[RMDB]
RNA sequence: GGGAACGACUCGAGUAGAGUCGAAAACCGUAGGUUCGCUGAGGGCUGAUGACCAUGGGAGAACCGAUGAUUCGAAAGAGUCAUCUCAGUAUCCCAUGCAAGGCUGUAGGCGAACCUAAACGGAAAAGACAAUAUAUACUUCGGUAUAUAUUGUCAAGCGUACAUACGGAUUCGUCCGUAUGUACGCAAAAGAAACAACAACAACAAC
Reactivity to 2A3 in 0.01 (KOAc 150mM, MgCl2 10mM, bicine 150mM(pH8.5), 24C), signal-to-noise 2, nucleotides 027 to 156: c000c010g020u010a030g000g010u000u000c000g020c000u030g030a220g030g110g000c000u040g020a220u150g020a020c060c000a000u000g000g010g000a050g010a000a010c000c020g000a000u000g000a000u010u000c000g040a110a110a110g000a040g020u010c000a000u010c000u000c000a000g030u000a000u000c030c010c000a000u000g000c000a040a020g020g000c100u300g010u020a000g010g010c000g000a000a000c000c000u000a000a000a000c000g030g040a040a040a040a080g000a000c000a010a000u010a000u000a000u000a000c010u040u040c230g090g000u000a010u000a000u020a000u060u060g000u020c010a000a010
Reactivity to DMS in 0.01 (KOAc 150mM, MgCl2 10mM, bicine 150mM(pH8.5), 24C), signal-to-noise 1, nucleotides 027 to 156: c010c000g010u000a050g030g030u000u020c000g050c020u010g000a220g040g000g000c050u000g030a160u000g020a210c300c000a040u020g030g030g010a030g040a130a160c170c300g000a030u020g000a040u000u030c000g010a270a070a260g000a030g000u000c000a030u010c000u000c010a050g020u000a250u010c000c000c000a000u000g000c030a090a170g040g000c000u000g050u000a300g010g030c020g010a000a020c000c000u000a000a020a000c030g000g000a060a010a050a110g000a070c010a020a020u000a000u010a000u000a010c000u010u000c300g030g000u000a000u000a020u000a000u000u000g010u000c010a010a170
This 207-nucleotide RNA was probed chemically with 2A3 and DMS. For DMS the reverse transcriptase was MarathonRT. The reactions ran in a buffer of 150 mM KOAc, 10 mM MgCl2 and 150 mM bicine (pH 8.5), at 24 C. For 2A3, 2,878 sequencing reads were counted.